[RMDB]
RNA sequence: GGGAACGACUCGAGUAGAGUCGAAAAACCUUUGUGUUCUUGGGAGUCAUUGAACUACACGAAUACCAUCGUCCCAUUGGGACGAUGAUUCGUGCAAUGACAUCGAUCAAGAACACUCUGGUAAAGCUUUUGCAGGUGUUCGCACCUGCAAAAGCAAGACUGUUAUUAUAUUCGUAUAAUAACAGUCAAAAGAAACAACAACAACAAC
Reactivity to 2A3 in 0.01 (KOAc 150mM, MgCl2 10mM, bicine 150mM(pH8.5), 24C), signal-to-noise 3, nucleotides 027 to 156: a000c010c000u010u010u010g010u000g000u000u010c000u000u010g020g020g020a020g020u000c010a020u010u030g030a140a110c040u150a030c300a000c000g010a010a020u110a220c120c000a000u000c000g010u010c000c010c030a300u180u300g010g010g000a000c000g000a000u000g030a000u030u030c000g000u000g000c000a000a000u000g000a010c010a170u080c020g140a160u110c000a010a000g000a000a000c000a000c000u000c000u010g010g020u080a150a050a070g000c000u000u030u000u000g000c000a000g000g040u020g100u050u190c270g050c130a000c010c000u000g000c010a000a000a000a010g000c000a000a020
Chemical mapping of a 207-nucleotide RNA with 2A3. The RNA was probed in 150 mM KOAc, 10 mM MgCl2 and 150 mM bicine (pH 8.5) at 24 C. For 2A3, 3,327 sequencing reads were counted. Reactivities are rounded to 0.1 and cut off at 0 and 3. For 2A3 the reverse transcriptase was SuperScript II with manganese. It was measured as part of the RMDB library RNAMAK.